[RMDB]
RNA sequence: GGGAACGACUCGAGUAGAGUCGAAAAGUAGUCGGAUUCGCAUCAAUCCACAUGUGUUGGUGUGGAUUGGAGUGAAACUUGAAUUAAAUUCCACCCCAAUCCACUACACAUGUGGAUUGAGGUGAAUGGUGUUUUUUAACUUCGGUUAAAAAACACCAAAAGAAACAACAACAACAAC
Reactivity to 2A3 in 0.01 (KOAc 150mM, MgCl2 10mM, bicine 150mM(pH8.5), 24C), signal-to-noise 2, nucleotides 027 to 126: g100u150a020g070u120c100g030g060a070u030u030c020g000c010a040u010c000a010a000u000c000c000a010c000a000u000g060u010g080u070u130g170g180u120g000u000g010g000a000u000u000g000g000a000g010u000g020a060a070a060c030u030u090g080a080a100u190u160a120a080a090u080u000c010c010a000c030c010c000c010a000a010u030c000c000a000c000u050a010c000a000c000a010u000g000u000g000g000a000u010u000g000a000g000g000u000g010a020a010u040